Notes:
This 177-nucleotide RNA was probed chemically with 2A3 and DMS. As a SHAPE reagent, 2A3 marks flexible, mostly unpaired nucleotides at the ribose 2'-OH. For 2A3, 4,808 sequencing reads were counted. The RNA was probed in 150 mM KOAc, 10 mM MgCl2 and 150 mM bicine (pH 8.5) at 24 C. The DMS profile rests on 2,333 reads.
[RMDB]
RNA sequence: GGGAACGACUCGAGUAGAGUCGAAAAGAUAUGGAGCAUAAAGCGAAGAACUCACAGUACAUCGGAAACGAUGUAUCACAGGGGAGCUUUGAUGCUCCUAAGUCAAAGUUUACCUUCGGGUAAACAAGUAACCUUACCUGUUCGCAGGUAAGGUUACAAAAGAAACAACAACAACAAC
Reactivity to 2A3 in 0.01 (KOAc 150mM, MgCl2 10mM, bicine 150mM(pH8.5), 24C), signal-to-noise 2, nucleotides 027 to 126: g010a000u050a030u110g000g020a000g000c010a010u030a030a010a000g010c060g160a260a040g110a230a200c020u050c080a120c000a030g050u020a000c000a000u000c000g000g010a030a020a010c000g010a020u000g000u010a030u100c080a100c050a090g000g000g020g150a080g020c020u030u040u100g210a060u010g010c000u000c010c000u020a020a000g000u000c010a100a040a110g010u000u000u000a010c000c000u030u080c230g010g010g000u010a010a020a010c000a010a010
Reactivity to DMS in 0.01 (KOAc 150mM, MgCl2 10mM, bicine 150mM(pH8.5), 24C), signal-to-noise 3, nucleotides 027 to 126: g000a020u000a240u010g000g010a030g000c010a020u000a010a010a010g000c000g030a160a160g000a090a200c040u000c070a060c250a250g000u010a000c000a000u000c010g010g000a070a060a100c000g010a000u000g000u000a010u010c110a170c300a170g020g000g010g000a130g010c000u000u000u000g010a020u020g010c010u010c000c000u000a000a030g000u000c030a070a070a170g010u000u000u000a000c010c000u000u000c220g000g000g000u000a000a000a000c000a090a110